[RMDB]
RNA sequence: GGGAACGACUCGAGUAGAGUCGAAAACGGAUCGUCGCCAAGACUGAUGUCCCGACUGCGGACAGGCGCGCCGCUCAUGAUCUCCGUCGGCAACAGACGCAUCGGCAGAUUAUCGGUCACCAGCGGCCGUAAAUACCUAGUUCGCUAGGUAUUUACGAAAAGAAACAACAACAACAAC
Reactivity to DMS in 0.01 (KOAc 150mM, MgCl2 10mM, bicine 150mM(pH8.5), 24C), signal-to-noise 9, nucleotides 027 to 126: c070g020g010a110u020c050g020u000c020g010c020c040a130a160g010a040c030u000g000a070u010g010u000c020c000c000g000a060c190u010g020c030g000g000a100c130a090g010g010c090g000c150g000c010c010g000c090u000c070a070u020g000a070u010c060u010c040c030g020u010c030g000g010c040a150a140c120a130g010a150c030g000c050a090u010c020g010g000c100a060g000a050u020u030a030u010c020g000g000u010c010a050c140c270a120g000c030g000g000c020
Reactivity to 2A3 in 0.01 (KOAc 150mM, MgCl2 10mM, bicine 150mM(pH8.5), 24C), signal-to-noise 9, nucleotides 027 to 126: c040g050g040a090u110c030g020u010c010g010c020c020a050a040g020a020c010u030g010a030u020g020u020c010c000c000g020a050c130u050g000c030g040g050a130c020a100g070g060c070g010c050g010c070c010g010c020u060c050a130u180g120a170u060c070u040c100c040g090u110c010g020g000c010a060a020c010a120g080a030c010g000c010a010u030c000g010g000c050a030g000a020u120u150a020u220c010g010g000u010c010a020c060c010a020g000c000g000g000c000